[RMDB]
RNA sequence: GGGAACGACUCGAGUAGAGUCGAAAACAUACAGCUCAGAUGACACUUGUGUCAAAAAACAUUGACUGGCUCAGAUGACUCAGAAGUUCGUGGCUGGAUCUAAGAAUUCAAAUGAUGGCCUAAGAAGUCAGUCUGUUGGCACUGCUGUCAUUUGUGAAUUAAAAUGAUACUUCGGUAUCAUUUUAAUAAAAGAAACAACAACAACAAC
Reactivity to 2A3 in 0.01 (KOAc 150mM, MgCl2 10mM, bicine 150mM(pH8.5), 24C), signal-to-noise 6, nucleotides 027 to 156: c020a010u280a040c070a090g060c030u020c030a000g000a020u010g000a000c010a010c010u120u170g000u020g000u010c000a100a080a030a020a010a000c100a080u140u110g010a000c000u000g000g030c010u010c010a080g050a230u110g010a070c030u050c150a120g060a250a020g220u120u070c050g060u070g010g000c010u070g040g050a000u010c020u090a090a040g060a140a150u170u150c070a080a060a060u120g030a020u060g030g000c010c000u030a090a070g060a070a000g020u010c000a000g000u000c010u040g030u010u020g000g010c010a010c000u020g040c060u010g000u000c000a000u000u000u020g000u000g020a000
Reactivity to DMS in 0.01 (KOAc 150mM, MgCl2 10mM, bicine 150mM(pH8.5), 24C), signal-to-noise 3, nucleotides 027 to 156: c040a200u010a110c060a120g000c040u000c020a040g010a090u010g010a030c000a030c020u000u000g030u000g020u000c000a000a020a090a150a080a090c070a090u000u000g010a030c020u010g020g010c000u000c020a120g010a230u010g000a060c000u000c040a120g010a100a120g010u000u000c050g020u000g010g010c060u000g010g000a080u000c020u000a040a070g000a060a090u000u000c040a040a060a090u010g000a100u000g030g010c040c010u000a210a170g020a040a040g010u000c000a030g020u000c030u000g010u000u000g020g000c050a050c090u010g010c050u000g020u000c000a060u010u010u000g010u000g000a110